[RMDB]
RNA sequence: GGGAACGACUCGAGUAGAGUCGAAAAGAUAUGGAUACGCGAGAGCAACAGCCUCGUGUCGGAAACGACACAGAGGACAUGCUCUCAUCCUAAGUCAAAGACGAAUGGUCUUCGGACCAUUCGUCAAGAAGGGAGAUUACUUCGGUAAUCUCCCUUCAAAAGAAACAACAACAACAAC
Reactivity to 2A3 in 0.01 (KOAc 150mM, MgCl2 10mM, bicine 150mM(pH8.5), 24C), signal-to-noise 1, nucleotides 027 to 126: g020a000u030a010u120g020g010a010u050a120c250g080c150g300a010g000a000g060c010a070a170c080a300g080c000c000u000c010g030u010g000u000c010g000g040a030a040a050c000g010a000c000a000c110a130g000a000g010g000a020c020a000u060g000c000u000c020u010c010a000u020c000c000u050a120a020g070u070c060a250a020a010g030a000c050g000a020a010u000g050g060u040c020u050u120c300g070g000a010c000c000a000u000u010c010g010u010c000a000a000
Reactivity to DMS in 0.01 (KOAc 150mM, MgCl2 10mM, bicine 150mM(pH8.5), 24C), signal-to-noise 2, nucleotides 027 to 126: g000a050u010a140u030g000g000a020u000a110c300g010c170g000a000g000a000g000c000a020a110c250a180g020c000c000u000c000g010u000g020u000c010g030g000a050a060a120c010g020a020c000a000c020a090g000a000g000g010a090c130a120u000g000c000u000c000u000c000a020u000c000c000u030a050a170g030u000c010a050a100a100g000a010c000g000a000a020u000g000g000u000c020u000u030c270g010g000a010c000c000a020u000u000c000g020u000c000a010a060
This 177-nucleotide RNA was probed chemically with 2A3 and DMS. 2A3 is a SHAPE reagent: it acylates the 2'-hydroxyl of flexible nucleotides of all four kinds. The RNA was probed in 150 mM KOAc, 10 mM MgCl2 and 150 mM bicine (pH 8.5) at 24 C. For 2A3 the reverse transcriptase was SuperScript II with manganese. The DMS profile rests on 1,286 reads.